[RMDB]
RNA sequence: GGGAACGACUCGAGUAGAGUCGAAAAUAGUAAUAAACCUCAUUUGUCGUGAAGAUAGCUCUCUGUUGAGCUGCCAUGAAGUCUUCAAACUUAUUUUUCUCAGUGACAAAUGAUGAUAAGGCUGUGGCAUGCCGCAAUUUCUUAACUUUGGGCAAAAGGAGUGAUACCUAUUCGUAGGUAUCACUCCAAAAGAAACAACAACAACAAC
Reactivity to DMS in 0.01 (KOAc 150mM, MgCl2 10mM, bicine 150mM(pH8.5), 24C), signal-to-noise 2, nucleotides 027 to 156: u010a060g000u000a100a090u000a060a160a110c020c030u000c010a040u010u000u010g050u010c000g030u030g000a060a090g010a050u000a040g020c000u000c010u010c110u020g000u000u000g040a030g030c000u000g020c080c050a120u000g010a060a100g020u020c020u010u000c070a140a120a130c110u020u000a140u000u000u000u000u000c050u000c050a220g030u020g000a060c030a010a010a030u000g010a030u000g000a150u000a070a080g020g000c040u000g040u000g000g000c050a180u020g000c030c040g040c080a040a100u000u000u000c050u010u010a040a050c060u000u000u000g010g030g040c060a060a090a130a150
Reactivity to 2A3 in 0.01 (KOAc 150mM, MgCl2 10mM, bicine 150mM(pH8.5), 24C), signal-to-noise 3, nucleotides 027 to 156: u080a000g090u040a080a000u070a210a180a070c010c020u010c010a020u010u040u020g020u000c030g010u030g090a050a020g000a100u070a010g000c000u010c000u010c060u090g100u100u080g020a000g010c020u000g010c040c010a010u070g130a070a020g010u010c000u050u040c000a040a050a040c010u080u040a090u050u150u010u100u000c040u030c110a140g030u080g090a000c000a000a010a000u020g020a040u080g030a040u030a090a050g030g000c020u040g040u020g040g000c030a000u110g020c000c000g060c020a050a100u110u050u010c020u090u070a060a080c000u030u030u010g000g020g000c000a020a030a040a070